[RMDB]
RNA sequence: GGGAACGACUCGAGUAGAGUCGAAAAAUUUGUGUAGGAAACACGUCCAAGCUUGAUGAGGUGAGACGGAGAGCUCGUCAUGUUUAUACGAGGUUUGUGGAAACUCCUAUUUUGAACGAGCAAAUCUUACUUGUGUCUUUUAGAGAAGUUAAUAUCAUCUGCUACCAGGUUUCGACCUGGUAGCAGAAAAAGAAACAACAACAACAAC
Reactivity to 2A3 in 0.01 (KOAc 150mM, MgCl2 10mM, bicine 150mM(pH8.5), 24C), signal-to-noise 1, nucleotides 027 to 156: a000u170u220u120g000u000g000u000a100g050g000a040a130a000c050a020c100g020u000c090c050a090a030g030c010u070u060g040a100u070g010a060g060g040u050g000a080g000a020c020g060g000a060g000a000g000c000u010c000g050u010c000a040u030g080u130u300u140a200u040a030c000g000a050g020g090u090u150u170g090u140g080g000a170a150a130c010u000c050c000u010a060u070u120u000u040g020a050a020c000g000a060g020c010a000a140a250u080c050u100u070a030c000u110u090g090u000g030u050c050u030u050u020u030a050g060a020g010a140a030g090u090u220a180a070u130a030u190c000a000

The record gives the reactivity of an RNA of 207 nucleotides to 2A3.
For 2A3 the reverse transcriptase was SuperScript II with manganese.
Source: RMDB library OK3TST, as collected in RNAgym.
Values cover nucleotides 27 to 156.
The 2A3 profile rests on 371 reads.